[RMDB]
RNA sequence: GGGAACGACUCGAGUAGAGUCGAAAACUUUAUAAACGGCACUUCCUGCGUGUCCAUGCCCGCGGGCCUGGUCUUGUCAUAGUGCUGACAUUUGUAGUUCCUUGACUUUCGUUCUCUGCCAGUGACGCGUUUGGUUGGAGUUCGCUCCAACCAAACGAAAAGAAACAACAACAACAAC
Reactivity to 2A3 in 0.01 (KOAc 150mM, MgCl2 10mM, bicine 150mM(pH8.5), 24C), signal-to-noise 1, nucleotides 027 to 126: c000u190u080u100a040u060a000a200a020c050g000g000c020a000c000u040u060c010c000u000g010c010g010u070g010u050c000c000a020u000g000c060c010c000g020c240g030g000g020c010c030u000g010g010u010c010u010u100g010u050c020a010u210a140g010u000g000c000u000g020a040c000a140u120u110u160g050u050a010g030u030u020c030c010u000u020g030a030c010u090u140u040c070g000u020u000c030u010c010u040g020c050c000a090g000u020g070a020c030g020
An RNA of 177 nucleotides, treated with 2A3 and read out base by base. High 2A3 reactivity points to a flexible backbone, as in loops and unpaired stretches. Conditions: 150 mM KOAc, 10 mM MgCl2 and 150 mM bicine (pH 8.5), 24 C. Reactivities are given for positions 27 through 126. The data come from the RNA Mapping Database (RMDB), library RFM100. For 2A3, 595 sequencing reads were counted.